[RMDB]
RNA sequence: GGGAACGACUCGAGUAGAGUCGAAAAAGGCAAAUUAUUUAAACGCAAGGGACGUGGUCUCGAACCCAGCGAGCUGGGAGAACUGGUCUAUCGCUAUGCCGAUAAAAUGUUCACCUUAAGCCAGGAAAUCACGUAACGAGUUCGCUCGUUACGUGAUAAAAGAAACAACAACAACAAC
Reactivity to DMS in 0.01 (KOAc 150mM, MgCl2 10mM, bicine 150mM(pH8.5), 24C), signal-to-noise 1, nucleotides 027 to 126: a110g040g010c000a050a070a080u000u000a120u030u000u010a020a070a300c200g000c000a040a070g000g000g000a030c040g010u000g000g000u010c080u000c060g000a120a180c020c000c030a080g000c090g000a080g000c040u000g000g000g000a040g000a010a030c040u000g010g040u000c060u000a060u010c010g000c030u000a090u000g000c160c000g050a170u010a010a010a130a090u000g030u020u000c130a120c050c030u020u030a050a110g010c000c040a140g000g000a070a150
Reactivity to 2A3 in 0.01 (KOAc 150mM, MgCl2 10mM, bicine 150mM(pH8.5), 24C), signal-to-noise 1, nucleotides 027 to 126: a000g050g000c030a020a010a010u120u080a070u090u230u140a110a120a000c020g000c050a040a060g070g000g020a020c150g130u150g000g040u020c060u020c140g040a080a080c000c010c010a010g010c000g060a040g000c020u000g040g000g050a090g030a010a000c000u030g070g030u010c040u030a010u090c020g000c050u100a080u290g040c060c000g010a020u030a050a010a000a100u040g000u000u000c010a060c010c000u030u100a050a000g000c000c030a030g030g040a020a260